[RMDB]
RNA sequence: GGGAACGACUCGAGUAGAGUCGAAAAUGUACGGCUGUCCAAUCUUUGACGCGCAUGAGGUAAUGUUCUAUCGUCAUUACGCUGCCGUGCAGUCUGAUGGGACCCACUACAACUCUAUGGGCUACGCGAAUACGAUCUUAUUCGUAAGAUCGUAUUCAAAAGAAACAACAACAACAAC
Reactivity to 2A3 in 0.01 (KOAc 150mM, MgCl2 10mM, bicine 150mM(pH8.5), 24C), signal-to-noise 9, nucleotides 027 to 126: u090g010u030a020c040g010g010c070u100g030u030c020c010a060a080u030c070u110u140u170g020a010c010g060c020g000c050a030u100g050a020g040g050u060a030a020u050g070u150u070c100u180a200u180c110g060u020c020a000u000u020a040c100g030c160u040g070c080c010g000u010g000c000a000g020u010c020u050g040a070u040g010g010g030a040c000c010c020a030c030u080a030c020a120a070c020u020c020u090a130u140g060g030g000c040u100a040c080g040c050
Reactivity to DMS in 0.01 (KOAc 150mM, MgCl2 10mM, bicine 150mM(pH8.5), 24C), signal-to-noise 9, nucleotides 027 to 126: u010g010u000a010c060g010g010c060u030g000u020c050c040a070a100u030c070u020u030u020g000a040c030g000c170g010c060a040u010g000a050g020g020u010a030a040u010g010u030u010c070u040a100u030c110g020u010c010a030u000u000a040c060g010c020u000g010c080c020g010u010g010c000a120g000u010c020u010g010a080u010g010g000g000a070c020c010c030a110c160u000a070c100a050a120c050u000c050u010a070u010g010g000g010c070u010a060c140g010c240
Background: The record gives the reactivity of an RNA of 177 nucleotides to 2A3 and DMS. The data come from the RNA Mapping Database (RMDB), library OK1LIB. Conditions: 150 mM KOAc, 10 mM MgCl2 and 150 mM bicine (pH 8.5), 24 C. 2A3 adducts were read by reverse transcription with SuperScript II with manganese. For 2A3, 72,892 sequencing reads were counted.